[RMDB]
RNA sequence: GGGAACGACUCGAGUAGAGUCGAAAAAAAAGAUAUGGAAACAGGAACUACACGAAGUCAUGGCAAUGAUGACGUUUCGGAAACGAAACGUUUGAGCCAUGUCACGUGCCUGUUUCCUAAGUCAAAACAUACCCUUGGAGUUCGCUCCAAGGGUAUGAAAAGAAACAACAACAACAAC
Reactivity to DMS in 0.01 (KOAc 150mM, MgCl2 10mM, bicine 150mM(pH8.5), 24C), signal-to-noise 2, nucleotides 027 to 126: a060a080a140a090g000a020u010a140u020g020g000a000a010a000c000a020g000g000a120a020c150u010a300c020a020c000g000a150a080g040u010c000a000u010g000g000c010a250a140u010g000a110u000g000a010c000g000u000u000u000c000g010g000a040a030a120c000g020a000a010a000c000g000u000u000u010g010a010g000c000c000a000u010g000u000c010a080c000g010u000g000c010c000u010g010u000u000u010c000c000u000a000a030g000u000c020a090a130a130a180
Reactivity to 2A3 in 0.01 (KOAc 150mM, MgCl2 10mM, bicine 150mM(pH8.5), 24C), signal-to-noise 2, nucleotides 027 to 126: a050a010a010a130g010a010u040a010u070g000g000a010a000a000c000a000g040g030a090a040c090u300a030c300a000c030g080a230a040g050u040c000a000u000g000g000c050a190a300u120g000a030u040g000a040c010g000u000u000u000c000g000g000a010a020a030c000g010a000a010a010c000g010u010u000u000g000a010g050c000c000a000u030g000u000c030a000c030g000u010g000c010c000u000g000u000u000u000c000c000u000a020a000g000u010c010a010a100a090a090
The record gives the reactivity of an RNA of 177 nucleotides to DMS and 2A3. The RNA was probed in 150 mM KOAc, 10 mM MgCl2 and 150 mM bicine (pH 8.5) at 24 C. Reactivities are given for positions 27 through 126. The data come from the RNA Mapping Database (RMDB), library TTRDES. The 2A3 profile rests on 4,609 reads. For 2A3 the reverse transcriptase was SuperScript II with manganese. DMS adducts were read by reverse transcription with MarathonRT. The DMS profile rests on 2,094 reads.